[RMDB]
Source information: The record gives the reactivity of an RNA of 207 nucleotides to 2A3 and DMS. The DMS profile rests on 7,838 reads. DMS adducts were read by reverse transcription with MarathonRT. Conditions: 150 mM KOAc, 10 mM MgCl2 and 150 mM bicine (pH 8.5), 24 C. 2A3 adducts were read by reverse transcription with SuperScript II with manganese. Reactivities are given for positions 27 through 156.

RNA sequence: GGGAACGACUCGAGUAGAGUCGAAAAGCCAUGAGUCCCAACGCAAAGCCGCGGCAAGUGGAGUUAGCGAGAAGAGACUAGGCUUUGGUUUCUUCAAGUGAAGCGGUCACCAAUCAGGUGUGGUAGUAGGAGCCUGCAUGGUUCGCCAUGCAGGCAAUCUAAGCAAUAGUUUCGACUAUUGCUUAGAAAAAGAAACAACAACAACAAC
Reactivity to 2A3 in 0.01 (KOAc 150mM, MgCl2 10mM, bicine 150mM(pH8.5), 24C), signal-to-noise 3, nucleotides 027 to 156: g040c030c010a060u130g050a010g060u010c000c000c020a100a030c060g010c050a040a050a060g020c030c010g010c020g070g050c110a120a050g030u090g020g090a140g040u170u170a020g030c030g010a040g010a060a010g010a020g000a000c020u020a020g070g130c000u110u100u070g010g000u020u010u020c020u020u010c020a060a080g030u040g100a040a010g030c020g030g040u030c010a030c040c010a050a120u230c070a060g000g040u040g030u050g010g060u070a080g000u040a090g070g150a050g030c000c000u000g010c000a000u010g010g040u010u030c080g030c060c000a000u000g000c000a000g000g000c000a000a000
Reactivity to DMS in 0.01 (KOAc 150mM, MgCl2 10mM, bicine 150mM(pH8.5), 24C), signal-to-noise 3, nucleotides 027 to 156: g040c030c020a100u000g010a200g030u000c000c000c000a180a140c080g020c050a090a080a160g020c030c010g010c010g020g000c080a060a230g020u010g010g010a130g020u000u000a270g000c040g010a300g010a060a050g000a050g000a040c020u000a070g020g010c120u000u000u000g000g010u010u000u000c020u010u000c020a040a300g020u010g000a080a140g020c000g020g000u000c020a060c020c020a090a100u010c100a070g010g020u000g020u000g000g000u000a060g010u000a090g020g010a160g010c010c000u010g000c000a000u010g020g000u000u000c300g000c000c000a010u000g000c000a000g010g010c010a000a010